Source information: The record gives the reactivity of an RNA of 177 nucleotides to 2A3 and DMS. The reactions ran in a buffer of 150 mM KOAc, 10 mM MgCl2 and 150 mM bicine (pH 8.5), at 24 C. The DMS profile rests on 1,525 reads.
RNA sequence: GGGAACGACUCGAGUAGAGUCGAAAAGCCCUAGGAGGCUAGGAGGACUGACCAAGAGAGAAGGGAAAGCAUUUUGUUCUGACCAUAAUGACAUAAGGAGUUCAUUUCACACCAAACAUCUUUCCAGCGUAUGCAUACGGUUCGCCGUAUGCAUACGAAAAGAAACAACAACAACAAC
Reactivity to 2A3 in 0.01 (KOAc 150mM, MgCl2 10mM, bicine 150mM(pH8.5), 24C), signal-to-noise 2, nucleotides 027 to 126: g000c000c000c000u020a150g050g010a090g100g000c040u060a010g040g030a030g040g020a050c020u070g030a040c000c040a040a000g050a000g000a000g060a070a050g020g020g000a030a030a000g010c030a030u050u020u040u030g050u030u030c030u050g020a050c010c030a020u080a150a080u100g040a020c010a040u120a090a080g080g020a060g010u060u000c020a000u050u070u090c060a020c000a000c020c030a060a000a020c020a030u050c020u040u030u020c020c020a010g000
Reactivity to DMS in 0.01 (KOAc 150mM, MgCl2 10mM, bicine 150mM(pH8.5), 24C), signal-to-noise 3, nucleotides 027 to 126: g000c040c010c000u000a130g010g010a090g000g030c050u000a040g010g020a080g000g020a080c040u010g010a110c100c080a110a070g010a100g000a040g020a120a090g010g000g000a040a030a090g010c080a060u010u000u000u000g020u000u000c070u000g010a080c170c090a080u030a020a050u000g000a060c080a090u060a100a130g010g010a090g000u020u000c040a030u000u000u010c060a030c060a070c050c050a040a070a070c160a030u000c030u010u010u020c040c040a100g010